RNA sequence: GGGAACGACUCGAGUAGAGUCGAAAAAUCAGGUUUCCGCCUUUGGUGUUAUAAGACCUUUGAUAUUUAUAAUCUCUGGUCUACUUUUACAAAAGUUCAAGGUUUGGAAAACAUUGCUUUUAAUGUUCAAGUUCGUGGUUCGCCACGAACAAAAGAAACAACAACAACAAC
Reactivity to DMS in 0.01 (KOAc 150mM, MgCl2 10mM, bicine 150mM(pH8.5), 24C), signal-to-noise 1, nucleotides 027 to 129: a000u020c120a110g030g000u010u000u050c020c010g040c040c010u020u000u090g050g000u040g080u030u030a270u040a100a040g050a020c010c010u020u020u020g010a050u000a070u000u030u080a150u080a130a070u010c020u040c000u050g000g020u030c000u020a120c060u010u000u000u030a130c230a190a010a070a060g000u020u050c050a040a090g010g010u000u000u000g030g030a000a000a000a000c040a040u000u000g000c150u090u070u000u030a040a070u060g160u060u000c060a100a000
Reactivity to 2A3 in 0.01 (KOAc 150mM, MgCl2 10mM, bicine 150mM(pH8.5), 24C), signal-to-noise 4, nucleotides 027 to 129: a010u060c040a000g030g000u000u000u000c000c000g000c010c000u040u030u160g060g040u110g050u140u070a160u050a170a000g000a000c000c000u000u000u000g020a020u020a020u050u290u020a250u080a230a020u030c030u000c000u000g000g000u000c020u020a000c000u050u020u040u050a050c020a060a120a020a070g050u030u090c000a020a030g040g000u040u240u280g170g000a000a010a010a000c050a060u040u070g000c060u100u120u010u100a100a090u070g000u040u080c030a040a070
An RNA of 170 nucleotides, treated with DMS and 2A3 and read out base by base. For 2A3, 4,010 sequencing reads were counted. The reactions ran in a buffer of 150 mM KOAc, 10 mM MgCl2 and 150 mM bicine (pH 8.5), at 24 C. DMS adducts were read by reverse transcription with MarathonRT. As a SHAPE reagent, 2A3 marks flexible, mostly unpaired nucleotides at the ribose 2'-OH. The DMS profile rests on 3,888 reads.